Background
The record gives the reactivity of an RNA of 177 nucleotides to DMS and 2A3. The DMS profile rests on 1,319 reads. It was measured as part of the RMDB library OK1LIB. The reactions ran in a buffer of 150 mM KOAc, 10 mM MgCl2 and 150 mM bicine (pH 8.5), at 24 C.
RNA sequence: GGGAACGACUCGAGUAGAGUCGAAAAGGUAUUCUCUUUGAGGGUGCGGAUGACCGAGCGGAGCUGCUGAAUGGCCGACUUAUAGGGCUUGAGCCGCAAAGCCAGCGUCGGGGGCUCGGGUAAACGCCCAAGCUGGAGCUUUCGAGCUCCAGCUUGGAAAAGAAACAACAACAACAAC
Reactivity to DMS in 0.01 (KOAc 150mM, MgCl2 10mM, bicine 150mM(pH8.5), 24C), signal-to-noise 1, nucleotides 027 to 126: g010g000u010a030u010u000c000u000c030u020u030u000g010a110g030g030g080u030g000c030g010g000a020u000g000a110c000c000g000a090g000c020g000g000a180g040c000u000g000c020u000g030a200a140u010g030g010c000c000g050a050c100u030u120a240u000a050g020g000g000c030u050u010g000a130g000c000c020g000c080a130a120a050g030c020c040a030g000c080g000u000c030g020g040g000g010g000c050u000c000g000g000g010u090a000a030a060c130g030c040
Reactivity to 2A3 in 0.01 (KOAc 150mM, MgCl2 10mM, bicine 150mM(pH8.5), 24C), signal-to-noise 1, nucleotides 027 to 126: g120g000u120a230u080u110c040u060c000u050u300u160g130a020g000g000g000u060g040c010g000g160a180u090g080a030c000c000g000a000g000c030g040g150a040g020c000u000g020c000u010g160a000a150u080g020g020c000c000g030a000c040u280u210a180u150a300g000g040g000c000u000u000g000a000g000c000c040g000c060a020a000a000g000c070c000a050g150c030g220u190c070g000g040g000g040g100c000u000c000g000g010g000u030a000a100a070c030g000c020
Notes: DMS adducts were read by reverse transcription with MarathonRT.